[RMDB]
RNA sequence: GGGAACGACUCGAGUAGAGUCGAAAAAGCCGCGCGGCGUGCUGGUGCACCGGGCCGCGGAUCUCGUACAGGACGUCCUGCAGCUUGGCCGACUGAGCGAAGGCGCGCUGCCGCUGAUGGCUGGCGGAUGGUGGGCUUUAUUCGUAAAGCCCACCAUAAAAGAAACAACAACAACAAC
Reactivity to DMS in 0.01 (KOAc 150mM, MgCl2 10mM, bicine 150mM(pH8.5), 24C), signal-to-noise 2, nucleotides 027 to 126: a000g030c010c010g000c040g010c030g050g040c020g000u000g020c010u000g000g010u140g010c000a150c020c010g000g020g000c040c000g030c020g000g000a020u000c300u010c030g000u030a120c260a120g000g000a050c230g010u000c030c020u000g050c030a120g000c050u000u000g000g040c160c010g000a170c070u010g060a300g000c050g000a100a280g010g020c000g000c000g030c040u020g000c080c000g000c040u020g030a020u040g000g000c060u020g000g000c030g000g010
Reactivity to 2A3 in 0.01 (KOAc 150mM, MgCl2 10mM, bicine 150mM(pH8.5), 24C), signal-to-noise 3, nucleotides 027 to 126: a000g020c010c020g020c000g020c010g010g000c020g040u020g000c000u040g010g140u300g030c050a070c080c010g050g120g000c000c030g010c000g000g000a050u030c050u030c110g220u300a130c080a120g110g190a040c000g150u120c030c010u170g030c000a060g050c030u080u170g000g000c000c000g130a150c100u290g020a070g080c050g000a150a030g000g000c000g010c000g000c020u000g000c000c020g000c000u050g040a150u100g030g000c020u010g000g010c100g100g030
Chemical mapping of a 177-nucleotide RNA with DMS and 2A3. For 2A3 the reverse transcriptase was SuperScript II with manganese. The data come from the RNA Mapping Database (RMDB), library OK1LIB. The 2A3 profile rests on 1,001 reads. DMS adducts were read by reverse transcription with MarathonRT.